[RMDB]
RNA sequence: GGGAACGACUCGAGUAGAGUCGAAAAGAUCGGAUGGGAAGAGUAUAUCCCAUGGGAAUCCCUGGGUUCCCCUCGUGUCCAGCCCCUCCCCGGUCCGAUGGAAGGGGGACUCCGGGACACCUUGCAUCCUUGUGUUAGAGUUCGCUCUAACACAAGGAAAAGAAACAACAACAACAAC
Reactivity to 2A3 in 0.01 (KOAc 150mM, MgCl2 10mM, bicine 150mM(pH8.5), 24C), signal-to-noise 1, nucleotides 027 to 126: g080a040u100c050g020g060a010u020g050g020g050a070a040g080a070g300u130a060u010a040u160c000c020c000a040u030g040g020g020a030a110u020c000c000c010u020g000g000g000u010u000c010c000c010c010u010c040g190u170g090u020c040c040a120g090c090c020c000c000u030c000c000c010c010g000g050u050c010c010g020a030u070g050g090a030a010g000g000g000g000g000a000c000u000c000c010g000g000g000a010c000a040c030c010u000u050g050c020a030u010
Reactivity to DMS in 0.01 (KOAc 150mM, MgCl2 10mM, bicine 150mM(pH8.5), 24C), signal-to-noise 1, nucleotides 027 to 126: g040a080u000c040g010g000a070u030g000g000g000a080a190g000a200g000u000a110u000a110u030c010c010c010a090u010g000g010g000a130a210u000c000c000c000u010g010g010g000u000u000c000c000c000c030u000c060g000u020g010u050c020c050a160g000c030c000c000c030u000c000c060c020c140g030g000u000c010c120g010a090u000g010g000a120a010g010g010g000g020g010a020c000u000c060c010g000g040g000a050c240a060c000c010u020u000g030c150a210u000
Chemical mapping of a 177-nucleotide RNA with 2A3 and DMS.
The RNA was probed in 150 mM KOAc, 10 mM MgCl2 and 150 mM bicine (pH 8.5) at 24 C.
For DMS the reverse transcriptase was MarathonRT.